RNA sequence: GGGAACGACUCGAGUAGAGUCGAAAAUUUUCGUACCAGUGUAUUCCUUCAAACCUCUUCUCUUGACUGUAGUGGUGGCCUGAAGGAGUUCAUUGGUACACAAAUCUUGAGAGCAUGGAGGAAAAUAAUAGACCAUACGCUUCGGCGUAUGGUCUAUAAAAGAAACAACAACAACAAC
Reactivity to 2A3 in 0.01 (KOAc 150mM, MgCl2 10mM, bicine 150mM(pH8.5), 24C), signal-to-noise 2, nucleotides 027 to 126: u070u010u010u020c000g000u000a010c000c010a030g000u010g000u010a000u000u000c000c000u000u010c000a060a130a120c000c000u050c030u080u110c020u070c030u130u170g110a270c180u140g190u300a000g020u010g040g070u000g030g000c010c010u050g000a000a000g000g000a000g000u000u020c000a000u000u000g050g000u020a000c000a030c000a000a070a020u070c100u050u140g040a060g000a000g130c130a140u290g010g020a020g100g110a070a160a030a000u240a030

Notes:
This 177-nucleotide RNA was probed chemically with 2A3. The RNA was probed in 150 mM KOAc, 10 mM MgCl2 and 150 mM bicine (pH 8.5) at 24 C.